Chemical mapping of a 207-nucleotide RNA with 2A3. The RNA was probed in 150 mM KOAc, 10 mM MgCl2 and 150 mM bicine (pH 8.5) at 24 C.
RNA sequence: GGGAACGACUCGAGUAGAGUCGAAAACUACCUCGAUGGUAACAUUGGCAACUAUGACUAUAGAUUCAACUUCUUCUCGUUUGGUCACGGCUAUAAUAUCACAUUCGAGAACAUCUACAUGAAAGACACACAAACAUAUCACGCCAUUGAGAUUAACGGAAAUGUGUUUCUUCGGAAACACAUUUCCAAAAGAAACAACAACAACAAC
Reactivity to 2A3 in 0.01 (KOAc 150mM, MgCl2 10mM, bicine 150mM(pH8.5), 24C), signal-to-noise 3, nucleotides 027 to 156: c040u020a000c000c000u010c020g020a010u010g050g000u080a120a010c020a230u090u190g140g000c030a070a060c060u110a020u100g130a120c110u120a080u050a190g050a110u160u250c130a270a180c150u160u110c000u060u010c010u040c000g040u000u000u060g040g010u160c070a040c150g030g000c050u070a100u090a300a070u180a040u030c060a010c000a110u000u000c010g000a000g040a030a030c020a100u030c020u090a040c010a100u100g100a050a080a000g110a040c020a000c000a000c060a210a090a000c070a060u040a010u100c030a020c130g010c000c000a000u000u010g050a060g020a040u110u090a070a020c070